[RMDB]
RNA sequence: GGGAACGACUCGAGUAGAGUCGAAAAGGAUGCUCCCCGGCAUUGAAUAUGUAUCACUAUUAACGUCACCAGAUUGAAAUGUACCGGCUAGAUGAAGACUAUUUGAUCAGCUAGUUACUUCUAUCGACAGCUAUAUAUGCUUCGGCAUAUAUAGCUGAAAAGAAACAACAACAACAAC
Reactivity to 2A3 in 0.01 (KOAc 150mM, MgCl2 10mM, bicine 150mM(pH8.5), 24C), signal-to-noise 2, nucleotides 027 to 126: g080g020a010u050g040c020u040c000c020c000c000g010g020c000a030u010u120g040a110a040u180a060u230g050u060a060u060c030a010c070u070a080u120u060a150a050c050g060u010c050a020c050c000a030g030a090u060u060g020a040a090a040u160g010u010a010c000c060g000g000c010u010a060g010a060u020g050a040a030g050a080c030u050a080u280u020u060g060a040u020c010a000g020c010u040a000g010u010u010a010c000u050u000c000u060a080u010c030g040a010
Reactivity to DMS in 0.01 (KOAc 150mM, MgCl2 10mM, bicine 150mM(pH8.5), 24C), signal-to-noise 2, nucleotides 027 to 126: g020g020a070u000g000c010u000c030c010c000c040g000g060c030a040u000u010g020a130a050u000a060u010g030u020a070u000c050a030c040u010a060u000u000a060a070c130g000u000c050a070c050c040a030g010a040u000u000g000a020a040a050u000g010u010a050c020c020g000g000c030u000a060g010a030u000g010a020a050g020a100c120u010a050u000u000u000g020a060u010c040a050g010c070u000a030g010u010u000a070c050u000u010c030u000a060u000c060g030a220

Conditions: 150 mM KOAc, 10 mM MgCl2 and 150 mM bicine (pH 8.5), 24 C. Structure probing data (2A3 and DMS) for a 177-nucleotide construct. The 2A3 profile rests on 1,689 reads.